The record gives the reactivity of an RNA of 177 nucleotides to 2A3 and DMS.
Source: RMDB library OK1LIB, as collected in RNAgym.
For DMS, 14,258 sequencing reads were counted.
RNA sequence: GGGAACGACUCGAGUAGAGUCGAAAAGGUGGCUCGAACUCCCGUGAGAAGAGACGACUCAACGAGUCACCGAUUUAGCAUGUUCGUCCUACGAAAGUGCCUCACAAGGAGUAGGACGUUCAUGCGAGGGAUGCAGUACCUUCGGGUAUUGCAUCCCAAAAGAAACAACAACAACAAC
Reactivity to 2A3 in 0.01 (KOAc 150mM, MgCl2 10mM, bicine 150mM(pH8.5), 24C), signal-to-noise 9, nucleotides 027 to 126: g000g000u000g000g000c000u010c010g040a110a070c090u040c030c010c020g040u060g020a040g020a160a070g110a030g050a100c080g060a080c030u010c020a050a030c010g000a000g000u000c000a000c000c000g000a000u020u030u110a020g000c000a000u000g000u010u000c000g000u000c000c000u000a000c010g100a120a050a080g100u110g120c050c040u220c030a090c060a120a070g050g010a050g040u000a000g000g000a000c000g000u000u000c000a000u000g000c000g000a060
Reactivity to DMS in 0.01 (KOAc 150mM, MgCl2 10mM, bicine 150mM(pH8.5), 24C), signal-to-noise 6, nucleotides 027 to 126: g000g030u010g000g000c000u000c010g010a100a090c110u010c000c010c010g020u010g000a040g010a120a140g010a170g000a140c190g010a210c000u000c000a100a250c010g000a020g000u000c000a000c000c000g000a040u050u010u040a140g010c000a000u010g010u000u000c010g010u000c000c000u020a010c010g010a160a150a050g000u010g000c140c080u070c110a080c080a070a060g010g060a300g000u000a000g000g000a030c000g020u000u000c000a010u010g000c000g010a060
Reactivities are given for positions 27 through 126. Reactivities are rounded to 0.1 and cut off at 0 and 3. The reactions ran in a buffer of 150 mM KOAc, 10 mM MgCl2 and 150 mM bicine (pH 8.5), at 24 C. DMS (dimethyl sulfate) methylates the pairing face of unpaired adenines and cytosines. For DMS the reverse transcriptase was MarathonRT.